[RMDB]
RNA sequence: GGGAACGACUCGAGUAGAGUCGAAAACCCCCUCCGGGGUCUCCUCGAAUCGGGCUGGCUCAUCCUCGAUUGCGAGCGGCGGUCCUGAGAACUCUUAUCUUCCUGCUUAGAAGAGGAGUCUCCUGGAAAAGUUGGAAGUUCGCUUCCAACAAAAGAAACAACAACAACAAC
Reactivity to DMS in 0.01 (KOAc 150mM, MgCl2 10mM, bicine 150mM(pH8.5), 24C), signal-to-noise 8, nucleotides 027 to 129: c010c000c000c040c030u000c010c010g040g030g020g000u000c050u030c040c010u050c020g050a110a070u060c050g000g060g000c050u020g060g020c060u030c060a110u090c090c030u000c100g040a150u050u060g070c090g020a060g000c160g030g020c120g010g020u050c030c030u020g000a100g020a050a070c060u050c050u040u040a130u050c030u010u010c020c020u020g030c090u030u030a060g040a090a160g020a020g000g000a040g020u010c030u050c020c040u010g040g010a060a050a050a100
Reactivity to 2A3 in 0.01 (KOAc 150mM, MgCl2 10mM, bicine 150mM(pH8.5), 24C), signal-to-noise 9, nucleotides 027 to 129: c000c000c000c000c020u000c000c000g010g000g010g010u000c000u000c010c000u010c010g040a050a080u070c020g000g010g000c030u060g110g010c030u040c070a170u160c040c020u040c030g130a150u060u270g150c070g030a050g020c040g050g010c030g000g010u050c000c020u070g010a040g020a070a040c030u050c040u170u170a140u130c040u100u060c030c020u070g060c040u100u060a040g030a120a010g000a040g010g000a000g000u000c030u020c010c010u030g010g000a030a040a010a050
The data come from the RNA Mapping Database (RMDB), library 15KLIB. Chemical mapping of a 170-nucleotide RNA with DMS and 2A3. For 2A3 the reverse transcriptase was SuperScript II with manganese.